[RMDB]
RNA sequence: GGGAACGACUCGAGUAGAGUCGAAAAGAAUAAAGAUCCCAGAGCGGCUUGCCGGACCUUUGCGCGCAGCCGCUCUGACUAUUUGUUUUUACACAUUCCGACCAAUUGCCGAGGACGCUCCCGAAAACAGUUACGGGACGUUCGCGUCCCGUAACUGAAAAGAAACAACAACAACAAC
Reactivity to 2A3 in 0.01 (KOAc 150mM, MgCl2 10mM, bicine 150mM(pH8.5), 24C), signal-to-noise 2, nucleotides 027 to 126: g000a000a010u040a020a040a010g040a010u050c040c040c000a000g000a000g000c000g020g000c050u130u280g020c030c020g160g040a300c030c080u100u150u300g060c020g020c020g000c000a000g000c000c010g000c000u030c000u000g000a000c000u030a130u040u030u060g030u050u020u000u040u110a070c130a000c000a100u160u190c040c020g000a010c000c030a120a130u210u000g010c000c000g010a010g050g010a060c000g020c000u010c010c000c000g000a000a050a000a070
The record gives the reactivity of an RNA of 177 nucleotides to 2A3. For 2A3, 744 sequencing reads were counted. For 2A3 the reverse transcriptase was SuperScript II with manganese.